[RMDB]
RNA sequence: GGGAACGACUCGAGUAGAGUCGAAAAGAUAUGGACUUUCUACCCACCCACGGGGCAUGAACUACUGCAAAAAGUGUCGGAAACGACAUACAAAGCAGCAUGCCCCGUGGAGGAAAGUCCUAAGUCACAUAUCUGUAUCCUUCGGGAUACAGAUAUGAAAAGAAACAACAACAACAAC
Reactivity to 2A3 in 0.01 (KOAc 150mM, MgCl2 10mM, bicine 150mM(pH8.5), 24C), signal-to-noise 2, nucleotides 027 to 126: g130a100u300a290u300g000g010a000c010u040u050u000c030u140a300c040c000c020a040c010c000c000a000c000g000g000g000g000c010a010u010g000a100a060c090u300a110c000u300g010c070a040a090a020a190a270g070u030g020u010c000g040g000a060a080a080c030g000a010c000a000u060a050c080a020a180a020g000c020a000g030c000a000u000g000c070c000c000c000g000u000g000g000a000g000g000a000a010a000g000u030c000c000u010a080a000g210u240c130a020
Reactivity to DMS in 0.01 (KOAc 150mM, MgCl2 10mM, bicine 150mM(pH8.5), 24C), signal-to-noise 3, nucleotides 027 to 126: g020a110u020a200u030g000g000a030c020u000u010u000c020u000a140c040c010c050a300c220c010c000a020c040g040g010g000g020c010a020u010g000a090a090c110u010a300c000u000g000c020a010a110a140a110a210g010u000g010u000c010g000g000a080a090a270c010g030a000c000a010u010a030c240a090a170a150g000c010a000g000c010a020u010g010c000c000c000c000g050u000g000g000a030g050g000a000a020a000g000u000c000c000u000a040a100g000u000c200a190